About this RNA: Chemical mapping of a 177-nucleotide RNA with DMS and 2A3. As a SHAPE reagent, 2A3 marks flexible, mostly unpaired nucleotides at the ribose 2'-OH. For DMS, 2,959 sequencing reads were counted. Conditions: 150 mM KOAc, 10 mM MgCl2 and 150 mM bicine (pH 8.5), 24 C.

RNA sequence: GGGAACGACUCGAGUAGAGUCGAAAAUUAGUGAGAGCAAUGCUAAAAAUGCAAUAAUGUUGGGAUUGCAGCUUAAAAGUCUUCUGGCAUCACCUUAUGGUUCAGAGCCUUGGACUAUGAGUGACACCAGUAGUGGACCAUUCGUGGUCCACUACUGAAAAGAAACAACAACAACAAC
Reactivity to DMS in 0.01 (KOAc 150mM, MgCl2 10mM, bicine 150mM(pH8.5), 24C), signal-to-noise 2, nucleotides 027 to 126: u010u010a030g040u000g000a100g000a110g010c090a110a050u010g000c030u020a030a000a060a100a030u000g000c050a040a030u000a140a080u020g020u010u000g000g000g020a040u000u020g020c020a080g030c100u000u020a080a080a080a080g000u000c100u010u020c030u000g010g060c030a160u000c010a040c070c010u010u030a070u010g000g010u000u050c050a070g000a120g030c040c020u000u000g000g010a000c010u040a170u000g000a000g000u010g000a040c220a160c040
Reactivity to 2A3 in 0.01 (KOAc 150mM, MgCl2 10mM, bicine 150mM(pH8.5), 24C), signal-to-noise 5, nucleotides 027 to 126: u150u070a030g060u060g150a110g010a020g060c070a090a080u140g000c030u160a080a080a060a040a030u070g000c030a020a050u110a100a070u100g030u060u030g030g010g020a040u020u020g000c010a000g020c010u070u070a050a090a110a050g010u000c030u100u020c060u070g010g000c000a120u030c010a040c010c000u180u180a170u300g010g000u040u100c070a030g010a030g070c010c000u010u020g010g000a000c010u010a020u080g010a010g010u030g020a020c020a050c060